[RMDB]
RNA sequence: GGGAACGACUCGAGUAGAGUCGAAAAGAUAUGGACCCAUUGCAGCAACAGCAUACUGGAGUCGGAAACGACUCUUAUGACAUGCUGGGAUGGGUCCUAAGUCAAACUUCCUGCUUCGGCAGGAAGAGAUACCCUGGAUCUUCGGAUCCAGGGUAUCAAAAGAAACAACAACAACAAC
Reactivity to DMS in 0.01 (KOAc 150mM, MgCl2 10mM, bicine 150mM(pH8.5), 24C), signal-to-noise 2, nucleotides 027 to 126: g000a020u010a140u000g000g010a040c010c000c000a000u000u000g010c010a020g000c010a120a100c230a090g030c000a000u000a030c300u020g000g000a010g010u010c020g020g000a050a030a100c000g000a030c000u000c000u000u030a030u000g030a020c040a300u000g030c010u000g000g000g020a010u000g000g000g010u000c000c000u000a000a050g010u000c030a170a100a200c000u000u000c000c000u000g010c010u000u030c200g000g060c000a010g020g000a000a000g010a040
Reactivity to 2A3 in 0.01 (KOAc 150mM, MgCl2 10mM, bicine 150mM(pH8.5), 24C), signal-to-noise 1, nucleotides 027 to 126: g010a000u030a050u100g000g000a020c000c000c000a010u050u100g300c000a020g020c100a130a180c010a240g050c000a020u020a010c110u130g000g000a010g000u010c000g040g000a000a040a020c000g000a020c000u000c000u000u020a000u000g010a000c120a210u300g010c020u000g060g000g000a000u020g000g070g000u000c000c000u000a000a000g010u020c000a050a030a040c000u000u000c000c010u010g030c020u080u060c200g220g000c030a010g020g030a010a010g000a010

Structure probing data (DMS and 2A3) for a 177-nucleotide construct.
It was measured as part of the RMDB library TTRDES.